The data come from the RNA Mapping Database (RMDB), library RNAMAK. This 207-nucleotide RNA was probed chemically with DMS. For DMS the reverse transcriptase was MarathonRT.
RNA sequence: GGGAACGACUCGAGUAGAGUCGAAAAUCCUAAGUCUAGUUCUAUGUCGCUUCACAGCGGGAGCGAAGGAGAAGCUCUUUGAUCUGUGUCGGAAACGACACAGGGAGAGCGUAACUUCGCGAAGAACGCUGUGAAGCGACAUAGAACUAGAUAUGGACUUUAGGUAUCAGUUCGCUGAUACCUAAAGAAAAGAAACAACAACAACAAC
Reactivity to DMS in 0.01 (KOAc 150mM, MgCl2 10mM, bicine 150mM(pH8.5), 24C), signal-to-noise 1, nucleotides 027 to 156: u000c010c030u010a080a300g040u000c010u000a010g000u010u030c000u000a030u010g010u010c000g020c000u000u000c000a000c000a040g030c000g010g000g000a300g100c010g010a040a000g000g040a190g010a150a300g040c000u000c000u000u020u000g000a110u000c040u010g000u010g000u000c020g030g000a200a070a260c000g010a030c000a000c010a000g000g030g000a040g000a030g010c010g000u010a120a220c000u000u000c010g030c010g010a170a190g000a090a200c030g000c020u000g010u000g000a010a000g000c000g030a000c000a000u000a000g040a010a000c000u010a000g030a000u000a070u000g000g000a240